RNA sequence: GGGAACGACUCGAGUAGAGUCGAAAAAGAUCCACGCUACGGCGUGGAUCACACGUUCAUCCCUAUAGGGACGGAAGUAGGCAUAGUGCCGAAGGAACGCAUUAGUCAUGCGCUACGGCGCAUGACACACAUCAGAGUCACUUCGGUGACUCUGAAACAGGCCUUGUUAGUUCGCUAACAAGGCCUGAAAAGAAACAACAACAACAAC
Reactivity to 2A3 in 0.01 (KOAc 150mM, MgCl2 10mM, bicine 150mM(pH8.5), 24C), signal-to-noise 2, nucleotides 027 to 156: a000g050a000u000c000c000a020c010g010c000u010a030c300g130g000c000g000u000g040g000a000u010c000a010c000a010c020g010u030u030c000a010u080c000c020c030u120a230u200a260g000g000g000a000c000g020g060a020a010g010u020a000g020g000c040a130u110a180g190u210g180c010c000g010a000a000g010g020a030a000c010g010c000a110u120u180a090g010u000c000a000u020g010c040g020c040u030a040c300g100g000c000g000c000a000u000g000a000c010a000c010a000c000a110u030c000a000g010a000g000u000c000a000c020u100u150c300g130g000u000g000a000c010u000c000u000g010a000a000a000